[RMDB]
RNA sequence: GGGAACGACUCGAGUAGAGUCGAAAAGAUAUGGAUGUGUGUACACGUGUAGUGCUCCGAUAAGCUGAUAUCGGAAACGAUAUACAGCUUUUGACGGAGCAUACACGUGUACACACAUCCUAAGUCAGGUGAAUAUUAACUUCGGUUAAUAUUCACCAAAAGAAACAACAACAACAAC
Reactivity to DMS in 0.01 (KOAc 150mM, MgCl2 10mM, bicine 150mM(pH8.5), 24C), signal-to-noise 3, nucleotides 027 to 126: g000a070u010a300u020g000g000a000u010g000u000g030u000g000u000a000c000a000c020g010u000g010u000a040g050u020g010c010u010c000c000g020a200u000a030a010g030c000u010g000a090u010a000u000c000g020g000a100a070a170c000g010a020u000a010u000a160c000a010g010c000u000u000u000u000g010a240c130g020g000a030g000c000a010u000a000c010a000c000g040u000g010u000a010c010a010c000a000c000a010u000c010c010u000a000a090g000u000c050a140